[RMDB]
Notes: The record gives the reactivity of an RNA of 177 nucleotides to DMS and 2A3. The DMS profile rests on 1,399 reads. Reactivities are rounded to 0.1 and cut off at 0 and 3. DMS adducts were read by reverse transcription with MarathonRT.
RNA sequence: GGGAACGACUCGAGUAGAGUCGAAAAUGUGGUCCGAAGAUCAUUAUCUUUUUGGAUGAACUUGAUGAUCCAAAUGUGAGAAUCAUUUUAGAAUGCAGAAUUUAAAUUACAACAUUGUGUUUUGCUCGCAUCUCUUUAUGUUCGCAUAAAGAGAUGCAAAAGAAACAACAACAACAAC
Reactivity to DMS in 0.01 (KOAc 150mM, MgCl2 10mM, bicine 150mM(pH8.5), 24C), signal-to-noise 2, nucleotides 027 to 126: u010g020u010g010g030u000c010c040g000a150a060g000a080u010c140a030u010u020a130u000c010u000u000u000u010u000g010g020a050u000g020a070a110c120u010u010g000a100u000g010a050u000c010c030a040a050a090u010g000u010g030a050g010a200a130u010c050a010u000u000u000u010a080g020a110a050u000g000c060a040g010a080a030u000u010u020a040a090a110u010u000a080c110a080a090c070a110u000u000g010u000g000u000u000u000u000g000c250u010c130
Reactivity to 2A3 in 0.01 (KOAc 150mM, MgCl2 10mM, bicine 150mM(pH8.5), 24C), signal-to-noise 2, nucleotides 027 to 126: u110g040u000g020g030u010c020c040g010a030a010g010a040u060c040a110u080u230a060u030c090u080u050u030u050u120g030g010a000u040g030a080a030c010u060u060g040a010u110g030a050u060c000c030a060a140a110u100g030u080g000a010g050a070a060u020c000a020u010u030u060u110a080g000a100a040u130g020c010a000g040a090a040u010u220u140a130a120a050u180u100a060c010a000a000c030a100u050u120g060u010g000u040u020u030u020g030c010u030c040